[RMDB]
RNA sequence: GGGAACGACUCGAGUAGAGUCGAAAAACAGGUAAUGCACCGCUAGUGUAUUUACUUCUCUCUUGAGCUUAGUAGCGAGCACGAGUUCGUUAUCUUCAUCGUUCGGGUCCCUCGGUCGCUUGGCGACCUCGCGAACAUCCAUGAUGAGGAAACGCACGAGAGUGACAUUCUUCGGAAUGUCACUCUCAAAAGAAACAACAACAACAAC
Reactivity to 2A3 in 0.01 (KOAc 150mM, MgCl2 10mM, bicine 150mM(pH8.5), 24C), signal-to-noise 2, nucleotides 027 to 156: a000c050a040g000g070u010a000a000u000g000c010a010c090c000g060c240u130a130g000u000g010u000a050u010u150u050a010c030u160u070c040u010c000u000c000u020u110g060a030g020c020u040u080a050g020u140a030g230c060g050a010g000c030a010c090g010a020g040u080u050c020g010u030u040a300u200c020u000u010c010a010u000c000g060u070u090c040g010g040g010u070c050c010c020u050c050g000g000u030c030g020c200u250u260g120g040c000g010a000c010c000u000c020g040c030g030a050a030c020a040u010c040c010a060u130g000a000u000g000a010g010g010a000a020a010c030g000c010a000c030
An RNA of 207 nucleotides, treated with 2A3 and read out base by base. Source: RMDB library OK3TST, as collected in RNAgym. The reactions ran in a buffer of 150 mM KOAc, 10 mM MgCl2 and 150 mM bicine (pH 8.5), at 24 C.